[RMDB]
RNA sequence: GGGAACGACUCGAGUAGAGUCGAAAAGGAUCGGCCUCUGCUCCUCCAUGGUGGACUCCAGGACCCCCGAAAGGAGGGGGGUGGGCCCUGGACCUCCGGGAGCCAUGGGAUCCGUGGAGUACCCGGGCGUGCAUAAAGAGUUCGCUCUUUAUGCACGAAAAGAAACAACAACAACAAC
Reactivity to 2A3 in 0.01 (KOAc 150mM, MgCl2 10mM, bicine 150mM(pH8.5), 24C), signal-to-noise 1, nucleotides 027 to 126: g100g010a100u050c050g120g000c000c050u010c030u080g030c000u020c010c000u000c050c030a050u180g000g000u070g050g030a100c110u040c020c020a040g000g030a090c000c020c000c000c030g130a090a080a030g260g080a080g020g000g000g010g020g000u090g050g080g000c030c010c000u000g000g000a010c020c010u000c000c020g000g020g020a020g000c010c000a050u050g000g010g040a060u080c050c020g000u060g040g000a060g050u110a160c020c020c030g010g050g030
Reactivity to DMS in 0.01 (KOAc 150mM, MgCl2 10mM, bicine 150mM(pH8.5), 24C), signal-to-noise 2, nucleotides 027 to 126: g000g010a050u000c020g000g010c080c020u000c070u000g010c030u000c030c010u000c050c060a050u020g000g010u010g000g020a140c240u010c010c030a020g010g000a050c040c000c000c010c020g010a110a110a090g000g000a130g030g000g020g010g010g040u010g010g010g000c030c010c010u000g000g010a080c030c030u000c020c000g000g020g010a080g000c060c050a020u000g000g010g010a030u000c040c010g030u010g010g000a080g000u000a120c050c000c020g010g020g010
The record gives the reactivity of an RNA of 177 nucleotides to 2A3 and DMS. Source: RMDB library VIROID, as collected in RNAgym. Conditions: 150 mM KOAc, 10 mM MgCl2 and 150 mM bicine (pH 8.5), 24 C. For DMS the reverse transcriptase was MarathonRT. 2A3 adducts were read by reverse transcription with SuperScript II with manganese. For 2A3, 1,214 sequencing reads were counted.